[RMDB]
Notes: This 177-nucleotide RNA was probed chemically with DMS.
RNA sequence: GGGAACGACUCGAGUAGAGUCGAAAAGAGCAGGCGUUGCCCGCUGGAUGGAGACAAUGCCGCUGAGCAAGGCGUAGCCCACCAUGGCUGCCAGUCCUGCCAGCACAGAUAGGAUCUGGUUCCGGCGGCGAUGCCUGCCAUUCGUGGCAGGCAUCGCAAAAGAAACAACAACAACAAC
Reactivity to DMS in 0.01 (KOAc 150mM, MgCl2 10mM, bicine 150mM(pH8.5), 24C), signal-to-noise 1, nucleotides 027 to 126: g000a120g010c040a000g000g020c010g030u000u000g000c110c030c060g030c010u000g000g000a010u000g050g000a060g020a090c130a080a090u000g000c080c090g010c010u000g000a170g050c100a080a040g050g010c080g020u000a000g000c000c000c220a100c270c300a040u000g000g000c000u010g000c000c300a050g030u000c000c010u000g000c130c000a060g020c050a160c040a030g000a120u010a090g010g020a300u000c010u000g010g010u000u010c030c030g010g010c010g010

Source: RMDB library OK2TST, as collected in RNAgym.